[RMDB]
RNA sequence: GGGAACGACUCGAGUAGAGUCGAAAAACAGUACCUUCUAGUUUAGGCUAGAAUGGUUUUGGUGAUUAAAAUGGGUUACCACGGGUGAAAUCUAUUGUAGAAGGGCAACCUUAUGCAGUAGUAAAGUUACCAUCGGAUAGUUCGCUAUCCGAUGGUAAAAAGAAACAACAACAACAAC
Reactivity to DMS in 0.01 (KOAc 150mM, MgCl2 10mM, bicine 150mM(pH8.5), 24C), signal-to-noise 1, nucleotides 027 to 126: a020c130a160g000u070a020c000c050u000u000c070u000a000g000u000u000u000a100g010g000c000u030a000g000a000a000u050g000g000u000u000u000u030g010g010u070g000a070u020u020a110a050a090a130u090g000g000g020u000u030a090c040c030a050c300g020g000g000u000g010a030a000a160u000c010u000a000u000u000g030u000a040g000a010a000g000g030g020c250a030a050c000c010u000u000a050u000g030c020a000g000u030a000g010u000a150a000a030g010u000
Reactivity to 2A3 in 0.01 (KOAc 150mM, MgCl2 10mM, bicine 150mM(pH8.5), 24C), signal-to-noise 2, nucleotides 027 to 126: a010c070a000g100u160a060c000c000u000u010c010u000a010g000u000u050u130a300g060g070c000u000a020g000a010a040u170g000g010u050u050u050u050g020g030u040g000a020u090u120a030a070a090a160u190g110g000g070u060u020a000c000c000a000c050g100g050g010u100g030a020a050a080u020c000u010a020u030u000g000u050a000g020a090a030g030g010g020c080a070a040c000c020u000u000a050u020g000c000a010g000u020a000g000u030a010a010a010g020u020